RNA sequence: GGGAACGACUCGAGUAGAGUCGAAAAACCUUUGUGGUUACGUUUGGUUCUAGACGUUGAAACUGUCGUAACAUCCCCAUUGGGGUGGACAGUGGAGUCUAGGACCAUCGUAACCACUCUGGUAAAAGUCAAAGCUCACUUCGGUGAGCUUUGACAAGUAAUCAUAUCUAUUCGUAGAUAUGAUUACAAAAGAAACAACAACAACAAC
Reactivity to DMS in 0.01 (KOAc 150mM, MgCl2 10mM, bicine 150mM(pH8.5), 24C), signal-to-noise 2, nucleotides 027 to 156: a050c010c000u010u000u000g040u000g020g010u000u000a010c010g010u000u010u010g030g070u000u010c000u000a040g010a040c000g020u010u000g010a220a180a060c010u010g010u000c030g020u000a130a300c010a140u000c010c000c010c280a300u000u000g030g020g020g000u010g020g030a020c020a030g010u000g010g000a180g010u000c020u010a020g010g000a010c010c000a020u000c010g020u000a030a000c010c000a000c010u000c010u000g020g010u010a030a040a110a110g010u010c000a010a000a000g010c020u010c000a010c000u000u010c300g070g010u010g010a010g010c000u000u010u000g000a000c000a020a110
Reactivity to 2A3 in 0.01 (KOAc 150mM, MgCl2 10mM, bicine 150mM(pH8.5), 24C), signal-to-noise 5, nucleotides 027 to 156: a000c010c000u010u010u010g000u000g000g010u000u000a000c000g030u060u090u070g000g010u000u000c000u000a010g000a030c020g160u220u050g010a010a020a000c000u000g000u010c020g010u070a050a080c030a170u180c030c020c010c110a260u280u300g000g000g000g000u010g030g000a000c000a000g010u010g010g020a020g000u000c000u000a000g000g000a000c000c000a000u000c000g000u000a000a000c000c000a010c000u000c000u010g000g010u060a100a120a050a030g000u000c000a000a000a000g000c000u000c010a000c000u060u120c270g090g000u000g000a000g000c020u000u000u000g000a010c000a000a000